[RMDB]
The record gives the reactivity of an RNA of 177 nucleotides to 2A3 and DMS.

RNA sequence: GGGAACGACUCGAGUAGAGUCGAAAAAUGUAUCAAGGGCUUAGGUCAACUUCCAGUUGAAUCUUUCUAUUCACUAUACUCUGUUCAUUUUGAACUGGCGCUUGAGAAAUUCUGCUUUCCGCCCCAGAACGUGAUGUCAUUUCGAUGACAUCACGUUAAAAGAAACAACAACAACAAC
Reactivity to 2A3 in 0.01 (KOAc 150mM, MgCl2 10mM, bicine 150mM(pH8.5), 24C), signal-to-noise 7, nucleotides 027 to 126: a000u060g020u050a030u030c020a040a030g090g090g010c080u200u300a020g060g020u030c010a030a010c020u200u070c110c050a030g020u070u070g050a060a050u030c030u030u250u000c040u070a120u050u050c030a020c070u100a090u150a240c060u040c050u070g080u070u060c030a060u070u070u100u100g010a030a020c000u010g030g000c050g010c120u000u020g000a010g040a030a020a000u080u040c030u060g080c050u050u060u020c020c030g030c020c000c010c010a040g050
Reactivity to DMS in 0.01 (KOAc 150mM, MgCl2 10mM, bicine 150mM(pH8.5), 24C), signal-to-noise 3, nucleotides 027 to 126: a020u000g010u020a060u030c020a000a030g000g000g020c020u010u020a050g000g000u000c010a030a050c060u000u000c160c020a080g010u020u010g000a060a080u020c110u020u000u020c120u030a060u000u000c030a060c110u020a060u000a160c110u020c030u040g000u000u020c110a060u000u020u000u000g000a040a030c050u010g000g000c030g010c020u000u020g010a090g000a090a070a060u010u000c030u000g000c120u000u000u000c060c010g000c040c000c030c080a080g000
About this RNA:
The DMS profile rests on 4,374 reads. The RNA was probed in 150 mM KOAc, 10 mM MgCl2 and 150 mM bicine (pH 8.5) at 24 C. DMS adducts were read by reverse transcription with MarathonRT. Reactivities are given for positions 27 through 126. It was measured as part of the RMDB library OK1LIB.